[RMDB]
Notes:
This 207-nucleotide RNA was probed chemically with 2A3 and DMS. The data come from the RNA Mapping Database (RMDB), library M2RFPK. For DMS, 3,562 sequencing reads were counted. The 2A3 profile rests on 958 reads. The RNA was probed in 150 mM KOAc, 10 mM MgCl2 and 150 mM bicine (pH 8.5) at 24 C.
RNA sequence: GGGAACGACUCGAGUAGAGUCGAAAACAUAAGACCUCAGAGCUAAUGAGCCACAUACCUACCCAAGGUGAAAGCUCCUUCUCUCGCAAUGUGUAACUGAUGAUUCUCAUGACCCCUGGUUGGAGAGCGCGCUAACACGCCUUCGGGCGUGUUAGAAUGUAUUAAUCUCGUUCGCGAGAUUAAUACAAAAAGAAACAACAACAACAAC
Reactivity to 2A3 in 0.01 (KOAc 150mM, MgCl2 10mM, bicine 150mM(pH8.5), 24C), signal-to-noise 1, nucleotides 027 to 156: c010a060u140a090a000g080a070c000c020u020c050a000g010a020g070c050u100a130a050u100g020a010g060c050c000a080c020a090u150a090c020c000u060a090c010c060c010a090a030g080g000u020g000a090a030a010g010c000u030c020c000u060u000c010u010c000u000c020g030c070a050a190u100g080u050g000u110a080a040c020u100g030a060u000g020a110u130u020c050u000c080a070u130g110a090c000c030c030c080u020g010g030u050u060g020g010a030g010a020g050c060g000c000g000c010u000a000a000c000a000c000g020c000c010u050u060c160g010g000g000c000g000u000g000u000u000a000g000a000a010
Reactivity to DMS in 0.01 (KOAc 150mM, MgCl2 10mM, bicine 150mM(pH8.5), 24C), signal-to-noise 1, nucleotides 027 to 156: c090a130u000a100a110g000a070c020c020u010c050a060g010a140g010c080u000a050a080u000g000a100g050c020c030a090c090a160u000a010c040c020u040a070c060c050c010a070a150g080g000u000g000a040a060a080g010c020u000c030c030u000u000c020u000c010u000c050g020c060a100a110u010g000u000g000u010a030a130c050u000g010a070u000g060a130u010u000c050u000c010a110u000g010a160c030c000c000c040u010g040g030u000u000g010g000a070g010a140g020c060g000c030g020c010u000a000a040c010a000c000g000c000c000u000u000c270g020g020g080c000g040u000g010u000u000a000g000a030a070